An RNA of 177 nucleotides, treated with DMS and 2A3 and read out base by base. 2A3 is a SHAPE reagent: it acylates the 2'-hydroxyl of flexible nucleotides of all four kinds. The reactions ran in a buffer of 150 mM KOAc, 10 mM MgCl2 and 150 mM bicine (pH 8.5), at 24 C.
RNA sequence: GGGAACGACUCGAGUAGAGUCGAAAAGAUAUGGACGAUCCUAAUUGUCUUGGACCUCGGAAACGAGCUAGACAUUUAGGAGUCGUCCUAAGUCAAACAUCCUGGGAGGUUCGCCUCCCAGGAUGAAGUGAAUAAAUCACUUCGGUGAUUUAUUCACAAAAGAAACAACAACAACAAC
Reactivity to DMS in 0.01 (KOAc 150mM, MgCl2 10mM, bicine 150mM(pH8.5), 24C), signal-to-noise 4, nucleotides 027 to 126: g010a040u000a300u010g000g000a010c000g000a150u000c010c000u000a020a010u000u000g000u000c000u010u000g030g010a080c300c000u000c010g000g010a120a110a200c000g000a010g010c010u000a000g010a020c000a000u000u000u000a000g000g000a030g020u000c000g010u000c000c000u000a020a060g000u000c030a140a130a250c010a000u000c000c000u010g000g010g010a020g020g020u000u010c240g010c000c000u000c000c000c010a000g000g010a000u000g000a040a100
Reactivity to 2A3 in 0.01 (KOAc 150mM, MgCl2 10mM, bicine 150mM(pH8.5), 24C), signal-to-noise 3, nucleotides 027 to 126: g010a030u070a030u130g010g010a000c000g020a000u000c000c000u000a030a020u010u010g010u010c020u050u110g120g110a300c040c000u000c010g000g050a080a100a050c010g020a010g020c010u020a010g000a010c000a010u000u010u010a000g000g000a030g030u050c010g000u000c000c000u000a010a010g020u020c010a090a060a060c000a010u010c000c000u000g000g030g010a020g030g020u090u220c300g110c070c000u000c020c000c000a000g000g000a000u000g000a000a000